This 177-nucleotide RNA was probed chemically with 2A3.
For 2A3 the reverse transcriptase was SuperScript II with manganese.

[RMDB]
RNA sequence: GGGAACGACUCGAGUAGAGUCGAAAAGAGCAAGUUUCCAGCAUGGUUGGGUUUGCCGUAGCCCUGCCCAUUCCUGUAGAACUUGCCAGAUCAGCACUGAGACGGUUUGAGGCCUCCUGUUGUCCCUUCGUUACGAAGCGUUCGCGCUUCGUAACGAAAAAGAAACAACAACAACAAC
Reactivity to 2A3 in 0.01 (KOAc 150mM, MgCl2 10mM, bicine 150mM(pH8.5), 24C), signal-to-noise 1, nucleotides 027 to 126: g040a000g000c000a000a050g020u000u070u000c040c010a040g000c010a010u070g000g030u000u020g000g000g000u050u050u100g150c060c080g050u120a030g000c020c000c000u000g020c010c010c010a030u090u090c030c010u070g010u090a050g000a030a010c000u010u040g000c000c010a020g020a090u110c030a000g040c040a020c040u020g000a000g040a060c070g020g130u000u010u130g100a020g000g020c000c000u030c000c000u050g020u090u010g040u020c000c000c010u000

Values cover nucleotides 27 to 126.